[RMDB]
RNA sequence: GGGAACGACUCGAGUAGAGUCGAAAAGUGGGGGAUUCGUCCCCCACAAAAAGCGUACUACUUUGGUGUGCCUCUACCCACCCAAGUCCCAAAUAGGACUUGGAGGAGGAACUACACGAGAGAAGUAUCGCAAAAAAUCCCCGUUUCGACGGGGAAAGCAUAAAACAUCCUUCGGGAUGUUUUAUGCAAAAGAAACAACAACAACAAC
Reactivity to 2A3 in 0.01 (KOAc 150mM, MgCl2 10mM, bicine 150mM(pH8.5), 24C), signal-to-noise 1, nucleotides 027 to 156: g010u000g020g010g000g040g010a010u020u000c030g080u000c000c000c030c010c000a000c000a000a000a000a000a030g020c010g010u010a000c020u010a030c060u010u000u070g120g020u010g040u050g000c000c000u000c020u060a130c090c040c050a040c000c000c000a010a020g000u000c020c000c040a160a300a080u220a090g000g000a000c000u000u020g000g000a020g010g000a000g000g060a130a080c090u130a000c070a000c050g130a060g000a000g000a060a020g020u050a050u300c160g000c000a120a000a000a000a000a020u060c010c030c030c000g020u080u090u080c160g050a010c010g000g000g010g070a000a080a050
Source: RMDB library RNAMAK, as collected in RNAgym. Structure probing data (2A3) for a 207-nucleotide construct. Values cover nucleotides 27 to 156. 2A3 is a SHAPE reagent: it acylates the 2'-hydroxyl of flexible nucleotides of all four kinds.